[RMDB]
RNA sequence: GGGAACGACUCGAGUAGAGUCGAAAAGGAGCACAGGAUGAGCGCCAUGCGCACCCAUGACGACACCUGGGAUAUCAAGACCAGCGUCGGCGCCACCGCAGUGAUGGUGGCUGCUGCCCGGGCCGUCAGAUCUCCAUUAGUUCGCUAAUGGAGAUCUAAAAGAAACAACAACAACAAC
Reactivity to DMS in 0.01 (KOAc 150mM, MgCl2 10mM, bicine 150mM(pH8.5), 24C), signal-to-noise 5, nucleotides 027 to 126: g000g020a120g010c030a060c030a070g000g010a050u010g000a110g040c070g000c020c030a090u030g000c050g010c030a120c020c030c040a150u010g000a060c030g010a070c110a180c090c010u020g000g000g000a120u010a170u020c200a050a060g000a110c000c070a060g000c130g010u000c030g000g030c040g000c010c000a000c010c000g010c080a180g020u020g010a110u050g000g010u000g020g000c000u020g000c000u000g000c010c010c020g000g000g020c110c030g000u050c040
Reactivity to 2A3 in 0.01 (KOAc 150mM, MgCl2 10mM, bicine 150mM(pH8.5), 24C), signal-to-noise 9, nucleotides 027 to 126: g090g010a050g000c020a010c030a060g040g030a100u110g040a030g060c030g000c030c030a070u140g020c030g000c020a060c020c020c010a050u100g010a010c020g010a020c010a030c070c010u010g010g010g020a050u080a040u280c120a090a020g060a100c010c040a030g040c040g070u040c010g020g000c010g000c000c000a010c000c010g060c080a100g090u140g250a240u140g020g020u000g050g000c150u170g000c010u020g000c000c000c000g000g000g020c020c000g010u010c020

The record gives the reactivity of an RNA of 177 nucleotides to DMS and 2A3. High 2A3 reactivity points to a flexible backbone, as in loops and unpaired stretches. The 2A3 profile rests on 14,028 reads. The DMS profile rests on 10,149 reads.